[RMDB]
Chemical mapping of a 177-nucleotide RNA with 2A3 and DMS.
For DMS the reverse transcriptase was MarathonRT.
RNA sequence: GGGAACGACUCGAGUAGAGUCGAAAAGAAUGACCUCAGCCUGCCACUGAGGGCUAACUGUGGCGUGAGUGUUGGCUCCAGGAGGUGCCAGUGGGAGGGCACUGGAGAGGGUGGGGCUUGGACAUGGACAGAACUGACUAUUCGUAGUCAGUUCUGUAAAAGAAACAACAACAACAAC
Reactivity to 2A3 in 0.01 (KOAc 150mM, MgCl2 10mM, bicine 150mM(pH8.5), 24C), signal-to-noise 1, nucleotides 027 to 126: g060a030a040u110g040a080c000c020u020c000a030g040c030c050u100g010c010c000a040c020u010g010a140g030g020g000c050u050a060a070c030u070g030u100g190g000c090g050u150g020a090g030u140g050u030u080g030g000c000u000c000c050a040g070g110a080g000g070u010g010c000c010a000g000u040g040g000g010a100g030g000g040c060a010c120u070g000g060a100g050a020g010g050g020u190g030g000g060g090c000u070u110g000g000a070c060a090u070g040g000
Reactivity to DMS in 0.01 (KOAc 150mM, MgCl2 10mM, bicine 150mM(pH8.5), 24C), signal-to-noise 2, nucleotides 027 to 126: g020a110a160u010g010a050c040c000u010c010a010g050c050c010u000g000c040c040a300c010u010g000a060g000g020g000c040u010a050a080c050u000g020u010g010g000c100g040u000g010a110g000u020g020u020u010g010g010c020u000c030c030a120g000g020a110g000g000u000g010c020c010a050g070u000g020g020g010a160g000g000g030c010a070c060u000g000g000a140g000a100g020g000g020u030g030g040g010g000c150u000u000g010g020a090c070a090u000g000g000